Source information: Conditions: 150 mM KOAc, 10 mM MgCl2 and 150 mM bicine (pH 8.5), 24 C. This 177-nucleotide RNA was probed chemically with 2A3 and DMS. Reactivities are given for positions 27 through 126. DMS adducts were read by reverse transcription with MarathonRT. The data come from the RNA Mapping Database (RMDB), library OK1LIB. For DMS, 5,597 sequencing reads were counted.

RNA sequence: GGGAACGACUCGAGUAGAGUCGAAAAGCUCUCCGCAAGGAGCAAGAGCGAAGACAUGUGUGCCGAAGCACGAACACUUGUCGAUUAGCAGCUUGACGUCCAGCAGGAGCAACGUCUUGCUGCGAAAGGGAUGCAUGUCGUUCGCGACGUGCAUCCCAAAAGAAACAACAACAACAAC
Reactivity to 2A3 in 0.01 (KOAc 150mM, MgCl2 10mM, bicine 150mM(pH8.5), 24C), signal-to-noise 6, nucleotides 027 to 126: g000c010u010c000u000c000c020g050c090a050a090g010g010a040g020c040a040a010g000a010g060c040g030a080a020g000a010c010a010u030g020u010g010u020g150c150c050g090a130a040g120c110a050c120g020a090a000c020a020c020u030u030g010u020c010g040a060u030u120a010g000c000a000g000c000u000u000g000a000c010g000u030c110c090a030g040c040a060g110g300a180g040c040a020a000c000g000u000c000u000u000g000c000u000g000c000g010a080a020a000
Reactivity to DMS in 0.01 (KOAc 150mM, MgCl2 10mM, bicine 150mM(pH8.5), 24C), signal-to-noise 3, nucleotides 027 to 126: g000c000u000c020u010c000c010g000c250a100a130g010g000a060g010c190a130a020g010a100g000c000g000a080a180g000a000c060a010u000g000u000g020u000g000c080c050g010a150a240g030c140a130c050g010a140a040c020a060c040u010u000g020u000c040g000a130u050u010a110g000c000a010g000c000u000u000g000a010c000g000u000c000c070a120g020c040a150g000g000a130g020c030a100a050c010g020u000c000u000u000g000c000u000g000c000g000a010a070a090